Structure probing data (DMS and 2A3) for a 177-nucleotide construct. Reactivities are rounded to 0.1 and cut off at 0 and 3. DMS adducts were read by reverse transcription with MarathonRT.
RNA sequence: GGGAACGACUCGAGUAGAGUCGAAAAGAAAGCGCGAGGCUGCGAAGCGGUCGAGUCGUAUGUCCGGCCAAAUGCGACGACAGUGAGAUCCUGAGGCCGGAAAGGAUCGAACUGGAGCGCGAAGAAAGGGAUAUACGAAGUUCGCUUCGUAUAUCCCAAAAGAAACAACAACAACAAC
Reactivity to DMS in 0.01 (KOAc 150mM, MgCl2 10mM, bicine 150mM(pH8.5), 24C), signal-to-noise 3, nucleotides 027 to 126: g020a110a070a100g010c040g000c020g010a120g000g000c010u000g000c030g000a090a110g020c030g020g040u020c020g000a090g000u000c010g030u020a040u010g030u020c010c000g000g000c080c050a010a080a070u020g010c000g030a060c010g010a140c040a020g010u000g000a300g010a010u000c000c000u000g000a190g000g000c000c010g000g010a030a130a010g000g000a000u010c000g000a210a040c020u000g010g000a110g030c030g020c000g010a070a040g010a090a090a160
Reactivity to 2A3 in 0.01 (KOAc 150mM, MgCl2 10mM, bicine 150mM(pH8.5), 24C), signal-to-noise 3, nucleotides 027 to 126: g060a000a020a020g020c030g010c020g020a020g060g020c020u060g000c070g080a070a020g040c050g050g040u030c020g010a020g050u020c020g000u040a060u120g090u010c010c000g010g040c020c020a060a070a050u210g030c030g020a060c000g000a000c170a010g010u030g000a020g000a000u030c010c010u030g000a040g150g000c000c000g000g010a000a000a000g000g000a000u000c000g000a000a010c000u000g000g000a020g000c040g000c020g020a050a020g080a030a050a020

For 2A3, 5,424 sequencing reads were counted.
The reactions ran in a buffer of 150 mM KOAc, 10 mM MgCl2 and 150 mM bicine (pH 8.5), at 24 C.